[RMDB]
RNA sequence: GGGAACGACUCGAGUAGAGUCGAAAAGGCGGGGAACGCCGAGUAGGGUUCUCUCCCAAGAAGGUGAAGAGAAGGCAAGAAUCGGACGUCUUCCCCAUAACGCUGGAAACGUCCUGGAAGGGGAAAGCACAGCAAUGUAGUUCGCUACAUUGCUGUGAAAAGAAACAACAACAACAAC
Reactivity to DMS in 0.01 (KOAc 150mM, MgCl2 10mM, bicine 150mM(pH8.5), 24C), signal-to-noise 2, nucleotides 027 to 126: g000g030c130g020g010g000g000a020a030c020g000c000c020g000a130g000u010a130g000g000g030u000u000c020u000c010u000c050c020c030a050a110g000a080a150g000g030u010g000a040a050g010a050g000a030a060g000g000c030a030a140g020a120a120u000c050g000g000a070c010g000u000c110u000u010c010c000c110c070a070u000a060a130c160g000c040u010g050g000a070a030a050c050g000u000c000c050u020g060g010a070a050g010g000g000g000a050a110a120g010
Reactivity to 2A3 in 0.01 (KOAc 150mM, MgCl2 10mM, bicine 150mM(pH8.5), 24C), signal-to-noise 1, nucleotides 027 to 126: g030g010c010g000g000g020g000a020a040c010g040c060c000g000a030g040u150a030g040g080g030u030u000c020u060c030u080c000c020c010a050a080g190a100a080g110g030u140g060a240a010g010a030g020a060a020g060g110c040a080a020g000a110a140u040c010g040g000a020c000g080u000c040u020u030c020c010c000c020a060u150a050a020c060g000c060u040g000g000a010a060a040c000g040u000c000c030u030g060g060a050a020g030g000g000g000a040a000a080g120

The record gives the reactivity of an RNA of 177 nucleotides to DMS and 2A3. Values are in units of 0.01, from 0 to 300, in steps of 10. The RNA was probed in 150 mM KOAc, 10 mM MgCl2 and 150 mM bicine (pH 8.5) at 24 C. For DMS the reverse transcriptase was MarathonRT. The data come from the RNA Mapping Database (RMDB), library VIROID.